[RMDB]
RNA sequence: GGGAACGACUCGAGUAGAGUCGAAAAUGGUGCAAGUUCACGAGUAGUGGUGACGAGACGUGCGAGAAGAUCCAACUGUUGUCUGGGAUUCAAACUCGAUAAGGUAUAGUUCCAGCUCGUACGAGAGAUUGGGACCGUGUUUCGACACGGUCCCAAUAAAAGAAACAACAACAACAAC
Reactivity to DMS in 0.01 (KOAc 150mM, MgCl2 10mM, bicine 150mM(pH8.5), 24C), signal-to-noise 1, nucleotides 027 to 126: u010g000g060u000g000c150a050a160g060u000u030c060a030c040g000a130g050u000a080g070u050g010g060u000g000a090c050g020a240g000a130c020g010u000g000c020g000a080g000a100a240g000a080u040c040c050a080a030c040u000g000u000u000g050u000c090u000g010g000g000a070u000u000c260a040a020a060c040u000c040g000a080u020a030a180g000g030u000a100u000a050g000u000u000c000c050a150g000c030u000c050g000u000a090c100g010a040g000a140g000
The record gives the reactivity of an RNA of 177 nucleotides to DMS. Source: RMDB library OK2TST, as collected in RNAgym. The reactions ran in a buffer of 150 mM KOAc, 10 mM MgCl2 and 150 mM bicine (pH 8.5), at 24 C. For DMS, 637 sequencing reads were counted.